RNA sequence: GGGAACGACUCGAGUAGAGUCGAAAAGUUAUGCUCUCGCUGCCUAAUGGCGGUGCGGGAAACCCACUCUAAAGUCCUUAGGGUUAGCCCCUUAAGGCGGGGUUCAGAGGCACCUGGCAACAGAAGCUGAAACUGUGCACAUUCGUGUGCACAGUAACUACCGUCUCAUGUUCGCAUGAGACGGUAGAAAAGAAACAACAACAACAAC
Reactivity to 2A3 in 0.01 (KOAc 150mM, MgCl2 10mM, bicine 150mM(pH8.5), 24C), signal-to-noise 3, nucleotides 027 to 156: g070u120u110a140u300g070c000u010c010u010c000g000c010u040g030c000c020u300a300a200u290g000g000c020g030g030u020g000c030g010g000g000a030a040a010c000c030c000a080c040u130c010u170a100a100a280g300u010c000c000u010u000a000g030g000g030u040u080a090g030c020c010c000c030u020u060a010a000g000g000c000g000g000g000g000u010u150c080a010g000a030g050g000c000a010c010c010u050g300g000c000a040a020c000a000g000a000a020g010c020u060g020a080a030a000c000u000g000u000g000c000a000c000a010u010u060c130g130u020g000u000g020c000a000c000a000g000u000a000a000